[RMDB]
Structure probing data (2A3 and DMS) for a 207-nucleotide construct. For DMS the reverse transcriptase was MarathonRT. It was measured as part of the RMDB library M2RFPK. 2A3 adducts were read by reverse transcription with SuperScript II with manganese. The RNA was probed in 150 mM KOAc, 10 mM MgCl2 and 150 mM bicine (pH 8.5) at 24 C.

RNA sequence: GGGAACGACUCGAGUAGAGUCGAAAAUCUAUGGUGCAACUCUUUAAGGCAAUAACGAACUAAUUCUAAGCAAGUAAUGGAGAAAUGCCAGGGUCACUAUCUAGCCAUAAUAGUGCUUGACAGUAUGAGAAUCUGCUACCCUUCGGGGUAGCAGAAAGUUAAGUACAAACUUCGGUUUGUACUUAACAAAAGAAACAACAACAACAAC
Reactivity to 2A3 in 0.01 (KOAc 150mM, MgCl2 10mM, bicine 150mM(pH8.5), 24C), signal-to-noise 4, nucleotides 027 to 156: u070c030u020a100u070g030g030u030g010c050a090a130c040u020c050u050u180u260a100a060g030g020c020a050a070u120a120a030c080g050a020a010c040u060a090a070u140u040c040u080a100a010g040c070a100a020g030u100a110a080u140g040g020a050g040a080a120a020u050g000c000c010a010g030g020g000u050c010a000c020u020a030u030c040u030a030g020c010c000a030u050a200a060u050a210g060u110g040c010u030u050g010a040c020a040g060u080a110u170g090a060g030a050a070u010c010u010g000c000u000a000c000c000c000u000u010c080g040g000g000g000u000a000g010c000a010g000a000a000a000
Reactivity to DMS in 0.01 (KOAc 150mM, MgCl2 10mM, bicine 150mM(pH8.5), 24C), signal-to-noise 3, nucleotides 027 to 156: u000c070u000a060u000g020g020u000g020c000a070a120c000u000c030u000u000u000a090a100g010g000c010a090a100u000a070a140c040g010a060a160c050u000a060a070u000u000c060u000a060a120g000c040a030a110g000u000a090a100u000g020g000a110g000a060a040a110u000g020c000c010a070g000g000g030u010c010a020c020u000a030u000c020u000a090g020c100c080a110u010a060a080u000a060g010u000g000c020u000u000g010a040c040a040g020u000a130u000g000a110g010a090a140u000c010u010g000c010u000a000c000c000c020u000u000c290g060g020g030g030u010a000g000c010a000g010a000a000a070